[RMDB]
RNA sequence: GGGAACGACUCGAGUAGAGUCGAAAAGAAUCUCACUUGGGCGAAAGCUUUAGUGACUCCAGCGCGUAUUAGUGAGAUUAUGAAUACGUUGAAAUGAUUACUGGGGAUUUAUGGCGCAAAGUAAGAAGGGUUAUCUAUUGUUCGCAAUAGAUAACCCAAAAGAAACAACAACAACAAC
Reactivity to DMS in 0.01 (KOAc 150mM, MgCl2 10mM, bicine 150mM(pH8.5), 24C), signal-to-noise 2, nucleotides 027 to 126: g030a060a010u000c020u010c000a000c010u000u000g000g030g020c000g000a080a090a090g000c000u000u010u040a010g030u020g000a050c040u010c050c000a090g000c010g010c000g010u000a050u050u030a000g000u010g020a020g000a010u020u050a020u010g000a130a100u000a080c090g040u020u030g020a030a100a120u020g000a080u020u030a050c020u020g000g010g020g000a120u020u040u010a090u010g020g000c070g020c020a110a040a060g000u000a030a050g020a120a140
Reactivity to 2A3 in 0.01 (KOAc 150mM, MgCl2 10mM, bicine 150mM(pH8.5), 24C), signal-to-noise 3, nucleotides 027 to 126: g040a000a000u010c050u030c010a010c000u030u020g070g000g000c000g080a120a000a000g010c060u110u230u260a070g000u040g030a060c000u000c010c000a000g020c010g000c000g010u140a010u080u060a100g040u010g090a030g000a060u030u090a080u070g050a030a000u050a040c000g000u070u170g100a070a110a110u160g030a050u130u140a000c000u000g000g000g040g020a070u050u100u050a090u100g020g000c020g000c110a010a020a060g040u180a030a070g030a160a010
This 177-nucleotide RNA was probed chemically with DMS and 2A3. High 2A3 reactivity points to a flexible backbone, as in loops and unpaired stretches. 2A3 adducts were read by reverse transcription with SuperScript II with manganese. Values cover nucleotides 27 to 126. It was measured as part of the RMDB library OK1LIB.